Overview:
An RNA of 177 nucleotides, treated with DMS and 2A3 and read out base by base. The reactions ran in a buffer of 150 mM KOAc, 10 mM MgCl2 and 150 mM bicine (pH 8.5), at 24 C. DMS adducts were read by reverse transcription with MarathonRT. High 2A3 reactivity points to a flexible backbone, as in loops and unpaired stretches. The data come from the RNA Mapping Database (RMDB), library TTRDES. Values cover nucleotides 27 to 126.
RNA sequence: GGGAACGACUCGAGUAGAGUCGAAAAGAUAUGGAUCGUGAUAGGGAGAAGAGGUAUCGGAAACGAUACCCUUCAUCGAUCUAUACGAUCCUAAGUCAAAGCAACACCAUGUUCGCAUGGUGUUGCAGCGAAAGUAUCGGUUCGCCGAUACUUUCGCAAAAGAAACAACAACAACAAC
Reactivity to DMS in 0.01 (KOAc 150mM, MgCl2 10mM, bicine 150mM(pH8.5), 24C), signal-to-noise 1, nucleotides 027 to 126: g040a070u000a130u000g000g000a040u000c000g000u010g010a050u000a000g010g020g020a130g010a030a000g000a180g070g000u000a030u000c000g010g010a070a050a110c030g020a020u000a000c000c000c010u000u000c010a150u000c290g000a070u000c000u000a010u020a020c000g000a000u000c000c000u000a030a110g010u000c010a080a130a190g020c020a000a000c000a000c010c000a040u000g010u000u020c270g010c000a000u000g010g000u000g000u000u000g000c000a020
Reactivity to 2A3 in 0.01 (KOAc 150mM, MgCl2 10mM, bicine 150mM(pH8.5), 24C), signal-to-noise 1, nucleotides 027 to 126: g020a010u020a010u120g010g000a020u000c010g000u190g200a060u110a040g060g140g040a300g040a050a000g220a180g020g000u000a000u000c000g050g000a010a050a000c020g000a000u000a010c000c000c010u000u010c000a000u140c090g060a040u040c000u000a000u010a010c030g000a000u000c000c010u000a030a010g040u000c010a090a130a070g000c010a000a000c000a000c010c000a000u020g030u030u030c300g000c090a000u000g000g010u000g030u040u000g000c000a000